RNA sequence: GGGAACGACUCGAGUAGAGUCGAAAAAGCUGCUACGGCAGCAAAACACAGUGGGCACUCAAUAAAUGUCUGUUGAAUUGAAAUGCGUUACAUUCAACGGGUAUUUAUUGAGCACCCACUCUGUGAAAUUAUCAGGUGAAUUCGUUCACCUGAUAAUAAAAGAAACAACAACAACAAC
Reactivity to DMS in 0.01 (KOAc 150mM, MgCl2 10mM, bicine 150mM(pH8.5), 24C), signal-to-noise 7, nucleotides 027 to 126: a130g000c000u000g010c010u020a100c160g030g020c010a010g010c000a030a030a100a080c010a010c080a020g020u000g000g000g030c110a300c000u000c000a000a010u000a010a010a010u000g010u000c000u000g020u000u000g000a010a010u010u030g010a060a110a080u030g010c210g030u010u020a080c100a030u000u000c010a020a000c010g010g000g010u010a000u000u000u000a000u010u000g000a010g010c070a150c000c000c000a000c020u000c050u000g000u000g010a120a100
Reactivity to 2A3 in 0.01 (KOAc 150mM, MgCl2 10mM, bicine 150mM(pH8.5), 24C), signal-to-noise 9, nucleotides 027 to 126: a000g010c010u000g000c000u020a040c200g120g000c010a000g000c000a010a000a010a030c010a000c000a000g000u010g000g000g000c040a010c030u000c000a000a000u000a000a000a000u010g010u010c000u000g010u000u000g010a020a020u060u100g070a080a070a090u270g070c110g080u090u100a070c030a020u000u000c000a000a000c000g000g000g000u000a000u000u000u000a000u000u000g000a000g000c000a000c000c000c000a000c000u000c000u010g010u010g050a110a070
Annotation
This 177-nucleotide RNA was probed chemically with DMS and 2A3. Source: RMDB libraries RFM100 and RFMREP, as collected in RNAgym. Values cover nucleotides 27 to 126. The reactions ran in a buffer of 150 mM KOAc, 10 mM MgCl2 and 150 mM bicine (pH 8.5), at 24 C.